An RNA of 177 nucleotides, treated with DMS and 2A3 and read out base by base. The reactions ran in a buffer of 150 mM KOAc, 10 mM MgCl2 and 150 mM bicine (pH 8.5), at 24 C. DMS adducts were read by reverse transcription with MarathonRT.
[RMDB]
RNA sequence: GGGAACGACUCGAGUAGAGUCGAAAAGCAUUGGGAAAGUUAAUCAAAAGUGCAUCAAAACUUUCCCUAAACGAAAUCAAAAUCGUUAUGAUGCACUUUUGACAUCGAUUAAGAUGAUUAGACACAACGAAUCAGAGAGAUUCGUCUCUCUGAUUCGAAAAGAAACAACAACAACAAC
Reactivity to DMS in 0.01 (KOAc 150mM, MgCl2 10mM, bicine 150mM(pH8.5), 24C), signal-to-noise 3, nucleotides 027 to 126: g010c110a120u000u000g010g000g010a100a060a100g010u000u010a060a120u000c000a010a010a000a010g010u000g010c000a000u010c000a050a100a100a150c080u000u000u000c000c000c000u010a020a010a010c010g000a030a040a070u010c280a060a080a130a110u000c010g010u000u010a250u000g000a000u000g000c000a020c010u000u000u000u000g000a100c030a000u000c010g000a110u010u020a110a060g010a020u000g000a080u000u000a050g010a120c120a080c150a070a090
Reactivity to 2A3 in 0.01 (KOAc 150mM, MgCl2 10mM, bicine 150mM(pH8.5), 24C), signal-to-noise 4, nucleotides 027 to 126: g050c040a090u140u240g030g000g060a060a150a080g070u110u110a100a040u050c020a000a010a010a000g010u000g000c010a020u010c050a050a000a040a200c020u000u030u000c000c000c000u010a000a000a010c010g020a040a040a050u230c090a050a080a020a100u020c000g010u040u040a070u170g000a000u000g000c010a000c000u010u000u010u000g010a000c000a000u000c010g120a150u150u230a120a070g010a010u020g010a040u040u140a050g090a030c060a010c010a110a150